[RMDB]
RNA sequence: GGGAACGACUCGAGUAGAGUCGAAAAGAAUUGGUAUGUAAGCUACACCUUCCGGUAGCUGCGUCACACUUUAAGAGUGUGCAUACUGAGCCGAAGCUCAGCUUCGGUCCCCCAAGGGAAGUGCAAAAGCUCGACUAUAUUUCGAUAUAGUCGAGCUAAAAGAAACAACAACAACAAC
Reactivity to DMS in 0.01 (KOAc 150mM, MgCl2 10mM, bicine 150mM(pH8.5), 24C), signal-to-noise 2, nucleotides 027 to 126: g000a110a070u000u000g000g000u000a020u000g000u000a300a180g000c000u000a000c010a040c110c010u000u000c020c040g030g020u000a010g000c010u000g000c030g010u000c010a030c000a000c000u010u020u010a120a060g020a010g020u010g000u000g000c010a000u000a030c000u010g040a000g010c030c000g000a020a010g020c010u060c200a090g000c000u010u000c000g010g000u010c000c000c010c160c110a100a030g030g010g010a010a010g000u060g070c300a060a100a080
Reactivity to 2A3 in 0.01 (KOAc 150mM, MgCl2 10mM, bicine 150mM(pH8.5), 24C), signal-to-noise 4, nucleotides 027 to 126: g120a020a120u020u010g000g000u010a000u000g000u000a020a000g010c000u000a000c030a090c010c000u000u010c000c000g010g000u000a000g000c020u000g000c000g000u000c000a000c000a000c000u070u130u270a300a130g190a000g230u000g000u010g000c010a000u000a000c010u020g010a010g000c010c000g010a000a000g000c030u080c300a030g000c000u060u000c010g000g000u000c010c000c000c000c000a020a040g070g010g000a020a030g020u030g140c060a080a050a040